[RMDB]
RNA sequence: GGGAACGACUCGAGUAGAGUCGAAAAACGGAGGCUACGGCCUCCGAAGAUCUCUGAAUCCUGAAUUUGUUUGUGUGCUGGACAGAACCCAUCUCUAGCACCAUUUAAAUUCAGCAUUUCUGAGGAAACUAUACCAACACUUCGGUGUUGGUAUAGUAAAAGAAACAACAACAACAAC
Reactivity to DMS in 0.01 (KOAc 150mM, MgCl2 10mM, bicine 150mM(pH8.5), 24C), signal-to-noise 4, nucleotides 027 to 126: a110c010g010g000a020g010g020c000u000a090c190g040g000c000c010u000c000c000g000a010a040g010a130u020c000u000c000u000g000a040a020u010c300c010u000g000a010a000u000u000u000g000u000u000u000g010u060g030u000g000c000u000g010g000a040c270a110g010a070a170c110c110c070a080u020c180u000c010u000a010g000c000a010c020c000a000u000u000u000a000a010a010u000u000c000a010g000c190a010u000u000u010c030u000g000a010g000g010a110a110
Reactivity to 2A3 in 0.01 (KOAc 150mM, MgCl2 10mM, bicine 150mM(pH8.5), 24C), signal-to-noise 9, nucleotides 027 to 126: a000c010g010g000a000g000g010c010u040a040c260g130g000c010c000u000c000c000g000a000a000g010a050u040c000u000c010u020g010a010a010u030c010c000u000g000a010a010u010u000u010g110u040u030u010g300u020g000u000g040c000u010g010g020a040c040a170g110a220a170c040c040c020a110u060c020u000c000u030a000g000c000a000c000c000a000u000u010u020a000a000a000u000u000c000a000g000c020a020u050u110u030c060u060g010a010g010g050a100a110

This 177-nucleotide RNA was probed chemically with DMS and 2A3. 2A3 adducts were read by reverse transcription with SuperScript II with manganese. DMS adducts were read by reverse transcription with MarathonRT. Values cover nucleotides 27 to 126. Source: RMDB libraries RFM100 and RFMREP, as collected in RNAgym.